Chemical mapping of a 207-nucleotide RNA with DMS and 2A3. The reactions ran in a buffer of 150 mM KOAc, 10 mM MgCl2 and 150 mM bicine (pH 8.5), at 24 C. DMS adducts were read by reverse transcription with MarathonRT. It was measured as part of the RMDB library PDB130. The 2A3 profile rests on 3,052 reads. For DMS, 2,700 sequencing reads were counted. 2A3 adducts were read by reverse transcription with SuperScript II with manganese.

RNA sequence: GGGAACGACUCGAGUAGAGUCGAAAACAGCACUCUGCCAACACGAACAGUGGACGUAUAGGGUGUGACGCCUGCCCGGUGCCGGAAGGUCAAGUGGAGCGGUAAGUGCAAGCAAAGCUGCGAAAUGAAGCCCCGGUGAACGGCGGCCGUAACUAUACUAAUCACAAUUCUUCGGAAUUGUGAUUAGAAAAGAAACAACAACAACAAC
Reactivity to DMS in 0.01 (KOAc 150mM, MgCl2 10mM, bicine 150mM(pH8.5), 24C), signal-to-noise 2, nucleotides 027 to 156: c040a210g020c020a070c040u000c010u080g010c010c020a060a280c040a110c040g010a160a160c140a130g040u010g000g000a110c140g020u010a120u010a060g000g000g000u020g010u000g000a050c080g000c050c000u000g000c020c020c020g010g030u010g030c020c010g030g000a080a090g050g020u010c030a010a300g050u000g020g010a300g010c020g000g000u000a030a300g000u010g040c140a080a180g000c080a050a180a270g000c000u000g010c020g010a210a160a080u000g010a190a100g010c020c000c000c010g060g000u010g000a040a130c110g020g030c040g010g020c000c020g000u000a060a130c040u000a100u010a170
Reactivity to 2A3 in 0.01 (KOAc 150mM, MgCl2 10mM, bicine 150mM(pH8.5), 24C), signal-to-noise 4, nucleotides 027 to 156: c010a010g020c000a000c000u030c010u020g000c000c020a130a030c000a030c050g190a300a080c060a210g020u030g010g020a050c040g050u070a080u150a240g010g000g000u010g010u010g020a020c040g010c000c010u070g000c010c000c010g210g010u030g000c020c010g000g040a110a060g020g010u070c010a010a020g010u000g020g010a020g020c010g000g000u060a080a060g050u050g110c080a070a050g020c010a010a140a120g010c000u010g010c010g010a030a040a010u180g150a220a020g000c000c000c000c000g000g000u010g030a030a000c000g000g000c000g000g010c010c000g030u050a030a020c030u020a010u090a180